[RMDB]
RNA sequence: GGGAACGACUCGAGUAGAGUCGAAAAAUAAAGUAACGCCAACAAACGCACUUUACAGCCUUCAAAAAGUGCCGUCUGGAAUAUGGGAAUAUGGCUGGGACGAUUGGCGAACUCCUGGCUAAAGGUGCCCUGCUAAAUUAUUCGUAAUUUAGCAGGGAAAAGAAACAACAACAACAAC
Reactivity to 2A3 in 0.01 (KOAc 150mM, MgCl2 10mM, bicine 150mM(pH8.5), 24C), signal-to-noise 7, nucleotides 027 to 126: a000u110a010a060a010g090u070a110a020c020g020c030c020a020a010c030a030a170a000c020g000c010a010c000u030u040u120a080c080a100g100c040c040u120u200c110a120a110a010a000a000g010u010g010c070c010g030u020c030u040g030g080a090a060u130a090u160g110g030g060a110a050u140a120u180g090g000c020u010g000g000g020a010c050g060a100u020u070g010g010c000g000a030a020c010u000c000c000u020g030g000c030u080a100a040a070g130g040u090g030
Reactivity to DMS in 0.01 (KOAc 150mM, MgCl2 10mM, bicine 150mM(pH8.5), 24C), signal-to-noise 5, nucleotides 027 to 126: a060u020a050a050a100g010u020a090a070c020g030c010c000a040a100c100a070a110a060c070g010c020a010c000u000u000u000a150c180a110g010c070c040u010u010c090a110a080a020a020a010g020u000g000c030c030g000u010c040u020g010g000a080a040u030a050u010g000g010g000a100a070u030a050u030g010g000c040u000g030g020g000a020c120g000a210u000u000g000g010c010g010a090a080c170u000c000c010u000g000g000c000u000a020a050a080g000g010u010g000
Structure probing data (2A3 and DMS) for a 177-nucleotide construct. DMS adducts were read by reverse transcription with MarathonRT. For 2A3 the reverse transcriptase was SuperScript II with manganese. 2A3 is a SHAPE reagent: it acylates the 2'-hydroxyl of flexible nucleotides of all four kinds. In probing experiments dimethyl sulfate is read out at A N1 and C N3, which are open when not base-paired. For DMS, 10,288 sequencing reads were counted. The reactions ran in a buffer of 150 mM KOAc, 10 mM MgCl2 and 150 mM bicine (pH 8.5), at 24 C. Source: RMDB library OK1LIB, as collected in RNAgym.